Notes
Chemical mapping of a 177-nucleotide RNA with 2A3 and DMS. The 2A3 profile rests on 1,618 reads. The reactions ran in a buffer of 150 mM KOAc, 10 mM MgCl2 and 150 mM bicine (pH 8.5), at 24 C. Source: RMDB library RFM100, as collected in RNAgym. For DMS the reverse transcriptase was MarathonRT.
RNA sequence: GGGAACGACUCGAGUAGAGUCGAAAAACAAGGGGUUUCGGCCUUUUGAACGCACUGAUGCCCUGACGCUGCUUCAUUACGGAGCUGUGUCCGGGGCCCCGGUGGAUUUCGAUCCGCCGGAGGGGUGUCUUCGCACUGUUUUCGAACAGUGCGAAGAAAAAGAAACAACAACAACAAC
Reactivity to 2A3 in 0.01 (KOAc 150mM, MgCl2 10mM, bicine 150mM(pH8.5), 24C), signal-to-noise 2, nucleotides 027 to 126: a000c030a010a010g020g020g000g000u040u040u080c180g170g000c010c000u050u000u000u050g050a150a070c060g020c040a010c030u080g050a120u150g080c000c010c000u000g000a000c000g020c000u030g000c000u020u000c010a160u060u300a090c210g020g000a000g000c000u010g010u000g000u000c020c110g000g000g000g000c000c010c000c000g000g010u000g030g010a000u090u000u070c090g020a010u000c000c000g000c000c010g000g000a050g020g040g020g000u000g010
Reactivity to DMS in 0.01 (KOAc 150mM, MgCl2 10mM, bicine 150mM(pH8.5), 24C), signal-to-noise 1, nucleotides 027 to 126: a120c000a020a040g000g020g010g010u000u000u070c210g000g000c020c020u000u000u060u010g000a180a170c050g000c000a020c030u000g040a160u020g000c000c000c040u000g000a020c000g000c010u000g010c010u000u010c000a160u040u030a140c200g000g020a000g000c000u000g000u000g000u030c060c100g040g000g000g050c020c020c000c000g000g020u000g010g000a000u000u000u040c140g000a050u010c000c000g000c000c000g010g000a060g000g010g010g020u000g000